[RMDB]
The record gives the reactivity of an RNA of 207 nucleotides to DMS and 2A3. The reactions ran in a buffer of 150 mM KOAc, 10 mM MgCl2 and 150 mM bicine (pH 8.5), at 24 C. It was measured as part of the RMDB library OK3TST. DMS adducts were read by reverse transcription with MarathonRT.
RNA sequence: GGGAACGACUCGAGUAGAGUCGAAAACUCGCGAUCCCAUGGAGGCGUGGGGAGCGACAUGAAUCAGCCUCGAUUAGAUGUGGUCGACAGUACGGCGGCGUACAGCGACCUAGUUAGAAGCCGCAAAACCGGAAGAGAUGACGCUCGACGGACGUCAAUGGUAUACUCGGUUCGCCGAGUAUACCAUAAAAGAAACAACAACAACAAC
Reactivity to DMS in 0.01 (KOAc 150mM, MgCl2 10mM, bicine 150mM(pH8.5), 24C), signal-to-noise 1, nucleotides 027 to 156: c020u000c030g030c060g000a140u000c010c010c030a070u010g030g050a220g000g020c010g050u000g030g010g000g020a150g070c000g030a090c080a070u000g010a130a070u000c020a180g020c050c000u000c020g010a110u000u000a110g010a050u050g040u000g050g000u000c010g000a100c060a160g030u000a030c010g040g000c140g000g020c010g030u000a060c020a180g010c020g010a070c010c030u000a030g020u000u000a190g010a030a090g000c000c010g040c020a090a070a050a090c080c050g020g010a070a110g000a110g000a130u000g050a010c010g000c000u000c010g020a200c040g010g000a030c000g000u000c000a150
Reactivity to 2A3 in 0.01 (KOAc 150mM, MgCl2 10mM, bicine 150mM(pH8.5), 24C), signal-to-noise 2, nucleotides 027 to 156: c010u010c010g010c010g090a230u080c040c000c010a000u010g110g000a000g000g000c000g000u000g000g000g000g000a030g050c030g000a020c050a150u290g120a070a110u100c030a020g000c000c020u020c020g010a090u200u160a180g110a140u180g090u030g100g010u000c000g010a160c080a180g010u010a020c030g050g090c020g000g010c000g020u020a010c000a000g010c000g000a040c000c010u000a060g000u010u040a010g000a170a040g020c000c000g000c000a070a050a000a070c020c000g090g000a110a000g030a100g000a020u110g000a020c040g000c030u000c040g050a080c000g020g000a000c000g010u020c000a060